[RMDB]
RNA sequence: GGGAACGACUCGAGUAGAGUCGAAAAUUUACCGAUUGCAAUAUCACUAUUAAAGAAUAUCAAUGAUGAUAUGUUUGAAUUACUGUGUCAUCCAAAAGUGCCAGUCGGUAUGGUGUACCAGUUGCAACUGCUAGCUAAAUUUCGAUUUAGCUAGCAGAAAAGAAACAACAACAACAAC
Reactivity to DMS in 0.01 (KOAc 150mM, MgCl2 10mM, bicine 150mM(pH8.5), 24C), signal-to-noise 3, nucleotides 027 to 126: u000u000u010a090c020c000g010a060u020u010g010c110a120a070u010a070u000c030a010c020u000a100u000u010a080a090a130g010a140a070u000a050u020c080a080a130u020g010a100u000g010a010u000a040u000g000u000u010u000g000a070a060u010u000a050c060u010g020u000g000u000c080a040u010c060c180a060a080a070a110g010u000g000c170c030a030g000u000c040g010g010u000a010u000g020g030u000g000u010a110c040c020a130g010u000u000g010c110a080a140
Reactivity to 2A3 in 0.01 (KOAc 150mM, MgCl2 10mM, bicine 150mM(pH8.5), 24C), signal-to-noise 3, nucleotides 027 to 126: u050u030u020a020c010c000g020a030u050u020g020c020a010a040u000a040u260c020a030c050u070a080u280u130a170a150a080g110a100a060u080a050u300c100a100a050u150g030a010u000g010a000u000a020u070g060u040u100u140g180a220a140u130u040a070c020u060g040u040g020u150c000a010u040c010c080a000a080a110a110g060u060g060c050c000a020g030u030c000g000g040u040a010u030g050g030u050g010u030a030c000c010a020g040u070u020g030c020a070a050